[RMDB]
RNA sequence: GGGAACGACUCGAGUAGAGUCGAAAAACAAUCUGGCUGUGACAUCCAUCACCCCACUGAUCUCCAGCGUUGAUUCAGCUGAUCAGUGGGCUGAGCAGGUGUCCCCUUUCUCCCUCACCAUUCCAUGUUUACGUAAGGGGUUCGCCCCUUACGUAAAAAAAGAAACAACAACAACAAC
Reactivity to 2A3 in 0.01 (KOAc 150mM, MgCl2 10mM, bicine 150mM(pH8.5), 24C), signal-to-noise 6, nucleotides 027 to 126: a010c050a010a100u060c040u040g040g010c060u060g110u160g080a000c000a010u020c020c000a030u000c020a000c000c000c000c010a000c000u000g000a010u010c060u100c150c050a030g010c020g040u060u140g130a220u300u170c070a040g010c000u010g000a000u000c000a010g000u000g000g000g000c000u010g000a000g000c060a030g000g010u000g010u010c000c000c000c000u020u090u030c050u020c000c010c010u060c020a090c030c010a070u090u050c040c020a050u130g060
Reactivity to DMS in 0.01 (KOAc 150mM, MgCl2 10mM, bicine 150mM(pH8.5), 24C), signal-to-noise 4, nucleotides 027 to 126: a070c100a060a070u030c110u010g000g000c140u000g000u040g000a060c040a040u000c020c040a260u010c010a000c300c010c000c010a020c000u010g000a000u010c040u030c220c130a030g000c030g020u010u020g020a160u030u020c070a100g030c040u010g000a070u000c010a000g010u010g000g000g000c080u000g000a020g010c190a160g010g000u000g000u020c010c020c000c020u010u000u010c040u020c010c020c000u000c050a090c080c060a140u010u010c020c020a080u030g010